[RMDB]
RNA sequence: GGGAACGACUCGAGUAGAGUCGAAAACAGCCCUUGGAGGCCAGUGAGGGGAAUGAAUGAGGCUGCAUGAUGACCCACCCGCAGUCACCCAGCGCUGGAGUGGUGGUAUGUGACUCAAGGCCCUAGGCGUGGUUAUCAACUUCGGUUGAUAACCACGAAAAGAAACAACAACAACAAC
Reactivity to DMS in 0.01 (KOAc 150mM, MgCl2 10mM, bicine 150mM(pH8.5), 24C), signal-to-noise 3, nucleotides 027 to 126: c120a110g000c010c000c020u000u070g020g010a060g000g010c050c050a070g010u020g000a100g000g010g030g000a080a060u040g000a110a150u000g020a050g000g000c040u010g040c040a050u030g000a060u020g020a160c160c040c010a050c040c020c030g020c010a020g010u000c060a080c030c020c050a100g000c160g040c010u030g000g000a090g040u030g020g010u000g000g000u010a030u010g000u000g000a050c090u000c040a050a120g010g000c020c000c050u020a100g010g000
Reactivity to 2A3 in 0.01 (KOAc 150mM, MgCl2 10mM, bicine 150mM(pH8.5), 24C), signal-to-noise 4, nucleotides 027 to 126: c040a060g040c000c000c020u020u090g120g010a100g020g000c000c040a020g030u010g060a060g030g040g000g020a060a120u130g050a100a080u070g010a050g050g030c050u000g040c030a050u100g090a100u180g040a090c030c000c000a020c010c000c020g040c020a000g010u030c010a060c010c030c040a000g010c020g000c070u060g040g010a130g050u200g050g020u030g000g050u090a120u120g070u030g080a010c000u020c040a060a070g080g020c030c000c020u060a040g020g000